[RMDB]
RNA sequence: GGGAACGACUCGAGUAGAGUCGAAAACCUCCAGAGGACCCCUUCAGCGAACGGAAGAGACUGGAAGCCCCAGAGGAAGACCAUAGCCAUGGGGAGAGAUGCUAGGAGUGGGGGGCGACCGGAACGACUAGCGUGAUCUUCGGAUCACGCAAAAGAAACAACAACAACAAC
Reactivity to DMS in 0.01 (KOAc 150mM, MgCl2 10mM, bicine 150mM(pH8.5), 24C), signal-to-noise 8, nucleotides 027 to 129: c000c000u000c030c000a040g000a040g000g000a080c060c030c010c040u000u060c070a050g020c070g030a060a070c010g030g030a050a060g020a060g000a120c000u030g000g000a070a130g000c020c000c000c000a090g010a040g010g010a050a050g000a130c070c060a080u050a050g010c050c090a090u050g000g000g030g010a070g000a010g010a060u060g030c050u030a060g030g020a060g040u040g000g000g000g000g000g000c010g050a080c010c030g020g030a050a060c100g020a080c100u050a100
Reactivity to 2A3 in 0.01 (KOAc 150mM, MgCl2 10mM, bicine 150mM(pH8.5), 24C), signal-to-noise 9, nucleotides 027 to 129: c000c010u040c020c030a030g010a050g070g040a070c010c010c000c010u050u060c060a040g020c010g060a040a040c030g030g020a050a010g040a010g040a060c040u070g010g020a040a010g020c000c010c000c010a030g050a060g050g010a030a030g030a040c030c030a100u120a040g040c030c030a040u090g000g000g070g000a000g010a000g000a010u140g020c060u080a040g020g030a050g030u100g010g040g000g010g010g000c010g010a020c010c000g020g020a040a020c050g070a040c070u090a030